[RMDB]
RNA sequence: GGGAACGACUCGAGUAGAGUCGAAAACGCAGAGGGUUCUGAUAACAAAGAACCUAGAUAGCCGCAUCGGUAUUAUAGGAUGUAGUCGGUGAGCCGGAAUGCCUGCAUCGUAAGCCUAUAAGUAAAUUUAAGUGUAAUCACUUCGGUGAUUACACAAUCAUAGGCACAGGUUCGCCUGUGCCUAUGAAAAAGAAACAACAACAACAAC
Reactivity to 2A3 in 0.01 (KOAc 150mM, MgCl2 10mM, bicine 150mM(pH8.5), 24C), signal-to-noise 2, nucleotides 027 to 156: c070g000c020a010g050a170g040g000g050u000u000c000u000g040a050u060a200a000c010a030a110a040g010a000a000c000c000u000a010g000a090u050a010g080c060c020g040c050a100u140c080g050g000u140a060u080u010a020u040a030g050g050a070u050g020u110a060g060u090c010g030g000u020g020a030g020c020c020g070g060a090a030u070g020c010c050u070g030c030a020u000c020g000u020a080a000g020c010c000u040a020u010a090a020g060u020a020a110a180u090u130u080a130a060g000u000g000u000a000a000u000c000a000c000u030u050c190g070g000u010g010a000u000u000a000c010a000c000a000a000
Reactivity to DMS in 0.01 (KOAc 150mM, MgCl2 10mM, bicine 150mM(pH8.5), 24C), signal-to-noise 2, nucleotides 027 to 156: c070g020c070a060g020a300g010g010g020u000u000c010u010g000a220u000a130a230c300a120a270a040g010a030a040c000c000u000a050g000a170u000a110g020c030c040g000c030a070u000c080g040g020u000a050u010u020a070u000a050g000g020a110u010g040u010a060g020u000c000g020g010u000g020a060g070c010c020g040g040a100a100u000g000c050c020u000g000c040a060u010c030g030u010a080a110g000c000c020u000a040u000a070a010g000u000a040a050a190u000u000u000a070a190g030u000g050u000a010a000u000c000a020c010u000u010c300g030g040u000g000a020u000u000a000c000a020c000a020a010